[RMDB]
RNA sequence: GGGAACGACUCGAGUAGAGUCGAAAACAGCUAGCCCUCACGUGCAUCUCAGGGAGCGCGUCGUUCAGGACACGGACCUGAAUGGGCGGAACCGUCGGAGUGUCCUUGAGCCACUGGCCGAGUGGACCGAGGUGCGUUCCUUCGGGAGCGUACUUCGAAAAGAAACAACAACAACAAC
Reactivity to 2A3 in 0.01 (KOAc 150mM, MgCl2 10mM, bicine 150mM(pH8.5), 24C), signal-to-noise 1, nucleotides 027 to 126: c050a000g110c030u050a020g050c020c000c000u040c000a080c010g050u090g020c040a170u000c080u000c120a100g020g000g000a140g130c150g000c010g110u000c060g040u020u020c000a020g080g000a060c090a080c270g090g100a070c000c000u010g030a070a050u220g110g110g000c000g090g100a150a090c040c040g140u120c120g070g060a100g030u060g060u060c000c010u030u050g020a020g020c020c000a030c040u070g050g000c020c030g020a020g020u090g000g000a000c030
This 177-nucleotide RNA was probed chemically with 2A3. For 2A3, 1,587 sequencing reads were counted. The reactions ran in a buffer of 150 mM KOAc, 10 mM MgCl2 and 150 mM bicine (pH 8.5), at 24 C. Values cover nucleotides 27 to 126.